Source information
The record gives the reactivity of an RNA of 177 nucleotides to 2A3. 2A3 adducts were read by reverse transcription with SuperScript II with manganese. Source: RMDB library RFM100, as collected in RNAgym. The RNA was probed in 150 mM KOAc, 10 mM MgCl2 and 150 mM bicine (pH 8.5) at 24 C.
RNA sequence: GGGAACGACUCGAGUAGAGUCGAAAAACUCGCCUUUUACUCUUCUUUCGUUUUGAAGGAAAUAUGAGUGAAAUCAGAAGGACAAUCGUCGUUUUGAUGAUAUACCUUCGCCUCUUUAGAGUAAGGAAGACGCAAGGUCGUUCGCGACCUUGCGUCUAAAAGAAACAACAACAACAAC
Reactivity to 2A3 in 0.01 (KOAc 150mM, MgCl2 10mM, bicine 150mM(pH8.5), 24C), signal-to-noise 2, nucleotides 027 to 126: a000c020u010c000g030c000c000u080u060u030u000a000c000u020c060u200u000c030u000u000u000c040g180u150u020u230u300g000a060a000g110g040a020a090a040u300a200u160g000a020g050u230g020a000a000a230u150c150a110g000a000a000g100g090a000c230a050a050u000c000g000u000c030g100u060u080u270u300g000a000u000g000a000u020a000u130a040c000c000u010u000c000g000c000c000u010c000u010u040u070a000g000a000g000u000a000a000g080g000a150